[RMDB]
RNA sequence: GGGAACGACUCGAGUAGAGUCGAAAAUGGUGAUGGAGACGGUGUCGCCGUCGCUUAGAACGUUUCCUACGGAAUCGACAAUCACCGUGGAGGUUUCUUCUGGGUCAGCUGUGGCAGUGUCGGUAGAAAACUCGUGGGCGCAUUCGGGGCAUACGAAGUAAUAAUAUGGUUUCGACCAUAUUAUUACAAAAGAAACAACAACAACAAC
Reactivity to DMS in 0.01 (KOAc 150mM, MgCl2 10mM, bicine 150mM(pH8.5), 24C), signal-to-noise 2, nucleotides 027 to 156: u000g020g000u000g010a020u010g000g020a110g010a020c010g050g020u000g000u010c110g000c050c030g000u000c030g050c020u020u000a100g010a090a170c090g010u010u000u000c030c000u020a300c110g000g000a090a100u010c050g000a090c040a080a110u000c010a030c000c030g070u000g030g000a110g020g030u000u000u000c040u000u000c020u010g040g010g030u000c050a130g020c040u000g030u020g000g020c050a100g020u010g010u000c040g080g010u000a100g000a070a070a080a050c070u000c040g000u000g000g010g020c000g010c050a130u000u000c020g010g010g010g000c040a070u000a070c070g020a080a200
Reactivity to 2A3 in 0.01 (KOAc 150mM, MgCl2 10mM, bicine 150mM(pH8.5), 24C), signal-to-noise 3, nucleotides 027 to 156: u120g040g000u030g000a030u040g040g030a060g000a060c040g000g060u090g060u190c110g000c060c010g020u010c010g000c010u080u060a050g020a140a030c030g010u010u040u070c020c000u040a060c080g010g050a030a050u070c040g020a030c040a040a050u030c020a020c030c010g000u010g030g040a030g000g040u030u070u040c000u050u030c030u030g040g010g030u030c010a020g000c050u020g000u070g070g000c030a040g020u010g030u110c030g060g000u060a050g120a070a080a020a010c060u050c030g020u080g020g030g000c040g000c030a020u060u120c040g010g000g040g000c020a030u100a120c070g080a120a050
Description: The record gives the reactivity of an RNA of 207 nucleotides to DMS and 2A3. The RNA was probed in 150 mM KOAc, 10 mM MgCl2 and 150 mM bicine (pH 8.5) at 24 C. For DMS the reverse transcriptase was MarathonRT. Reactivities are given for positions 27 through 156.